An RNA of 207 nucleotides, treated with 2A3 and read out base by base.
RNA sequence: GGGAACGACUCGAGUAGAGUCGAAAAGAAAGAAAGAAAGCGGUUGGGUGGGUCCAUCGACCGUCGUGGCGUGUUCGGACGCUUUACCACGACGCGAGGAAAUAGCGAGACCGACCACCCCCUUUAACAGAGGUAUAGUAGUUCGCUACUAUACCAAGUAAGAUAACGGGUUCGCCCGUUAUCUUACAAAAGAAACAACAACAACAAC
Reactivity to 2A3 in 0.01 (KOAc 150mM, MgCl2 10mM, bicine 150mM(pH8.5), 24C), signal-to-noise 1, nucleotides 027 to 156: g040a000a050a000g070a080a030a010g120a110a170a000g090c150g050g120u110u070g070g020g000u120g060g020g030u010c060c030a170u080c000g070a080c050c030g000u010c000g000u000g010g000c040g020u080g060u200u130c160g000g100a050c020g020c030u060u050u160a040c030c000a000c000g000a000c000g060c070g020a000g000g080a150a080a190u080a020g030c040g030a010g000a070c100c020g000a000c020c010a000c000c000c000c000c000u000u170u020a150a010c050a070g120a020g110g000u040a030u000a000g000u000a000g030u020u010c130g000c190u000a010c000u000a000u000a000c000c000a010a000
Record summary: Conditions: 150 mM KOAc, 10 mM MgCl2 and 150 mM bicine (pH 8.5), 24 C. The data come from the RNA Mapping Database (RMDB), library M2RFPK.